[RMDB]
RNA sequence: GGGAACGACUCGAGUAGAGUCGAAAAACCACUUGGACCAGACGGGCAGGCUUUACCAACUGAUGAUUCUGGUAACUACAUCUAUCCAGUAAUCGGUCCAGAUGGACAAGCUCUUCCGACAGACGAACCCCUGAAAGUGGUUCGCCACUUUCAGGGGAAAAGAAACAACAACAACAAC
Reactivity to DMS in 0.01 (KOAc 150mM, MgCl2 10mM, bicine 150mM(pH8.5), 24C), signal-to-noise 1, nucleotides 027 to 126: a130c020c000a110c220u010u000g000g010a160c140c030a070g040a220c110g020g020g040c060a090g000g010c070u010u010u010a200c020c020a060a140c000u010g020a100u000g020a030u010u000c020u000g000g000u000a030a160c150u000a060c250a040u000c140u000a100u000c000c000a000g030u000a080a000u000c000g000g000u010c070c040a000g000a070u000g000g000a040c200a110a050g000c000u000c070u000u010c000c010g030a230c120a080g020a110c030g020a080a160
Reactivity to 2A3 in 0.01 (KOAc 150mM, MgCl2 10mM, bicine 150mM(pH8.5), 24C), signal-to-noise 1, nucleotides 027 to 126: a030c020c010a030c120u040u110g010g110a060c020c050a040g000a080c030g010g000g100c050a000g020g000c020u060u010u030a080c000c010a040a010c030u040g020a040u060g010a010u140u000c010u000g020g050u040a030a060c080u180a070c070a160u090c040u090a060u030c000c010a040g030u280a010a080u010c030g040g040u070c060c000a010g000a030u060g020g000a040c000a030a000g000c000u040c000u180u070c030c050g070a090c040a080g070a020c040g040a040a120